[RMDB]
RNA sequence: GGGAACGACUCGAGUAGAGUCGAAAACGCUAGGAUUACGAUCCUAGCGAAGGGAAACCAAGCAGUAGGUUCGUGUACCUACAGCAAAAAUAAACACGAAAAACUACGACUAUACGUAGUCGUAGAAAGCGCAUCAUCCAUUCGUGGAUGAUGCGCUAAAAGAAACAACAACAACAAC
Reactivity to 2A3 in 0.01 (KOAc 150mM, MgCl2 10mM, bicine 150mM(pH8.5), 24C), signal-to-noise 2, nucleotides 027 to 126: c010g120c000u000a020g000g010a000u000u140a100c220g040a040u000c000c000u000a000g000c010g000a000a010g010g000g030a040a040a040c040c060a000a050g000c050a050g000u010a000g010g000u020u050c000g000u000g000u030a100c000c010u000a010c060a020g170c010a010a040a010a060a060u300a040a040a000c000a010c020g000a060a020a040a040a000c000u000a000c000g070a010c000u030a000u020a070c210g200u040a030g000u010c000g000u000a000g000a010a070